RNA sequence: GGGAACGACUCGAGUAGAGUCGAAAAGCCGCCGCUCGACGUGAUGGCCGCCCUACGCGAGCCCGGCAUCGGCGUCAUCGCUGAGGUCAAGCGCGCUAGUCCUUCGGCAGGCGCAUUGGCGACCAUCCCGUAACUGCGGAUUCGUCCGCAGUUACGGAAAAGAAACAACAACAACAAC
Reactivity to 2A3 in 0.01 (KOAc 150mM, MgCl2 10mM, bicine 150mM(pH8.5), 24C), signal-to-noise 2, nucleotides 027 to 126: g000c000c000g040c040c000g010c040u060c020g190a130c020g060u060g050a030u070g000g020c010c000g010c020c020c020u050a050c050g040c010g000a000g000c000c030c000g040g010c010a050u040c020g100g000c030g090u170c050a090u140c030g000c010u000g000a020g050g020u030c020a050a090g040c010g000c010g010c090u000a020g080u100c030c000u100u110c070g030g000c050a110g010g000c010g000c070a050u020u100g020g000c000g020a020c000c000a030u010c060
Reactivity to DMS in 0.01 (KOAc 150mM, MgCl2 10mM, bicine 150mM(pH8.5), 24C), signal-to-noise 1, nucleotides 027 to 126: g000c000c020g000c050c060g000c080u000c070g000a110c070g000u000g020a050u000g010g020c020c000g000c080c010c030u010a050c130g010c010g020a030g000c040c060c100g000g010c090a050u000c050g060g000c000g010u000c150a180u000c060g030c030u000g000a060g010g030u000c060a050a090g010c030g010c070g030c000u010a060g020u000c030c100u000u000c090g050g040c020a200g000g000c020g050c030a150u020u010g010g010c000g010a070c020c010a100u010c000